Conditions: 150 mM KOAc, 10 mM MgCl2 and 150 mM bicine (pH 8.5), 24 C. This 177-nucleotide RNA was probed chemically with 2A3 and DMS. For 2A3, 1,881 sequencing reads were counted.

RNA sequence: GGGAACGACUCGAGUAGAGUCGAAAAAGUCCGGUUUAGGUAUGAGAAUGAUUGGAGCACCUCUCCAGAUGUUCCAGAUGUAAUGAAACCGGUGCAAGCUUCAAGCUCUUGAGGUGUUUCUACAGGCUUUCAACUGAUCUUUCGAGAUCAGUUGAAAAAAAGAAACAACAACAACAAC
Reactivity to 2A3 in 0.01 (KOAc 150mM, MgCl2 10mM, bicine 150mM(pH8.5), 24C), signal-to-noise 4, nucleotides 027 to 126: a010g090u030c000c000g000g040u030u010u040a130g050g100u100a080u090g190a220g000a240a050u090g090a110u140u030g000g010a010g020c070a070c080c030u160c000u010c040c020a020g030a070u080g000u040u000c010c000a000g020a190u170g100u180a150a100u080g090a030a020a000c000c000g040g010u040g010c040a040a080g010c000u040u060c050a100a020g010c020u010c000u150u060g020a040g000g060u020g010u030u030u000c020u030a060c100a100g050g060c050
Reactivity to DMS in 0.01 (KOAc 150mM, MgCl2 10mM, bicine 150mM(pH8.5), 24C), signal-to-noise 3, nucleotides 027 to 126: a090g000u020c010c020g000g000u010u000u020a040g010g000u000a090u000g000a120g030a150a070u030g020a110u000u000g000g000a030g020c280a080c200c160u020c100u020c150c090a040g020a070u010g000u010u000c000c030a050g010a090u010g000u020a090a090u070g000a040a020a010c040c030g010g000u010g000c140a050a100g000c020u000u020c030a020a100g000c080u020c070u000u000g010a100g010g000u010g010u000u000u010c000u000a070c270a140g000g010c160